[RMDB]
RNA sequence: GGGAACGACUCGAGUAGAGUCGAAAAACUAUGUCGAUCGGGUGUCCACACUAAGUUCGGUAUCGAUAUGGUGCUCCCGGGGGAGCUUGGGACCACCAGGUCGUCUAAGGAGGGGUGAACCGACCCAGGUCGAAGACGGAGCAGGUCAAAACCCCCGCAUAUCAAUUGUGUUCGCACAAUUGAUAUGAAAAGAAACAACAACAACAAC
Reactivity to DMS in 0.01 (KOAc 150mM, MgCl2 10mM, bicine 150mM(pH8.5), 24C), signal-to-noise 2, nucleotides 027 to 156: a080c030u020a030u010g030u000c050g030a010u000c030g080g020g030u000g020u040c060c080a120c040a100c060u000a060a180g030u000u000c050g030g020u010a050u000c010g030a050u000a030u000g010g050u000g030c110u000c020c010c000g030g000g000g050g020a090g010c110u000u010g020g000g000a110c110c030a110c010c010a050g030g040u000c020g030u000c030u020a090a170g030g000a150g010g000g000g030u000g000a150a070c150c050g000a060c020c000c000a190g030g020u000c020g000a100a110g010a130c070g000g010a060g020c050a090g000g000u000c030a010a000a070a270c020c000c000c020c000g000
Reactivity to 2A3 in 0.01 (KOAc 150mM, MgCl2 10mM, bicine 150mM(pH8.5), 24C), signal-to-noise 3, nucleotides 027 to 156: a000c010u020a010u030g010u020c000g010a010u030c000g000g000g040u080g070u100c100c040a150c030a040c110u160a150a110g070u070u060c060g010g040u110a060u050c010g000a020u010a020u070g010g010u030g020c040u030c030c020c020g010g000g000g010g000a060g020c000u060u050g080g050g010a030c030c000a030c020c020a060g020g040u040c010g000u000c060u050a060a070g050g030a060g030g050g010g000u030g080a070a050c040c020g030a020c010c020c020a030g010g090u040c020g060a050a010g030a020c040g000g010a050g030c040a040g010g000u050c010a000a020a090a240c000c000c000c000c000g010